[RMDB]
RNA sequence: GGGAACGACUCGAGUAGAGUCGAAAAAGCAAGUGGAUGAGUUAAAAAUGCCAGACUUGGAAAAUUAUUUGUCCAUGUAUUACUCAUUUUCAGGUGGAAAGUUUGUAUGUCCUUAUUGUGAAUUCAUUAGCGAAAAGAAGGCCGGAUUAUCGGCACAUAGAUUAUCGGUAUUCGUACCGAUAAUCUAAAAAGAAACAACAACAACAAC
Reactivity to DMS in 0.01 (KOAc 150mM, MgCl2 10mM, bicine 150mM(pH8.5), 24C), signal-to-noise 2, nucleotides 027 to 156: a090g050c040a040a180g020u010g010g000a040u010g010a120g000u010u020a010a110a070a080a100u000g010c020c120a080g010a140c100u020u000g020g000a050a040a080a100u020u000a110u010u000u000g000u000c000c010a050u000g020u000a060u000u000a060c030u020c020a090u000u000u000u000c060a080g040g030u000g030g010a080a090a080g000u010u010u010g030u010a070u000g020u000c040c010u000u000a100u000u000g030u000g010a100a140u000u010c060a060u020u000a050g010c030g010a060a040a060a130g030a070a190g000g060c040c020g020g000a170u000u000a070u000c020g050g030c000a030c070a090
Reactivity to 2A3 in 0.01 (KOAc 150mM, MgCl2 10mM, bicine 150mM(pH8.5), 24C), signal-to-noise 2, nucleotides 027 to 156: a020g080c020a020a030g020u010g050g050a030u000g000a010g030u060u070a130a040a070a100a070u100g060c050c020a040g040a100c020u020u020g020g110a000a000a090a180u220u090a220u120u090u160g030u010c010c010a010u010g030u010a040u010u090a040c030u030c020a000u030u080u160u080c060a010g000g000u070g030g050a050a050a080g010u080u150u070g100u060a090u010g050u020c000c000u050u070a090u110u140g060u080g090a120a030u030u100c020a030u140u060a030g010c010g040a000a000a070a070g140a060a030g090g000c020c030g000g020a010u160u080a080u300c010g000g020c010a010c000a030